[RMDB]
RNA sequence: GGGAACGACUCGAGUAGAGUCGAAAAUUGCAGAUGAGGUCACCGGGCUCAGGUGAGGCCAUAUUAUGCCUGGCUUCUUUGGGGUGCCUCUGGUUCCAGGCCCAGCAUCUCCUGCCUGGGUGAUAGAAUCGCCGUUACGAUUCGUCGUAACGGCGAUAAAAGAAACAACAACAACAAC
Reactivity to 2A3 in 0.01 (KOAc 150mM, MgCl2 10mM, bicine 150mM(pH8.5), 24C), signal-to-noise 1, nucleotides 027 to 126: u200u080g030c010a030g080a230u090g120a040g010g020u140c070a060c000c000g000g000g000c130u190c170a000g000g000u000g120a130g000g140c080c040a000u070a250u280u160a130u170g010c000c000u010g030g000c000u050u000c000u090u040u250g120g000g000g010u100g100c000c000u000c000u000g000g000u100u000c000c000a050g000g000c000c040c000a000g000c000a000u000c000u000c010c070u020g000c000c000u040g010g010g000u000g000a000u060a050g060a030
This 177-nucleotide RNA was probed chemically with 2A3. High 2A3 reactivity points to a flexible backbone, as in loops and unpaired stretches. The reactions ran in a buffer of 150 mM KOAc, 10 mM MgCl2 and 150 mM bicine (pH 8.5), at 24 C.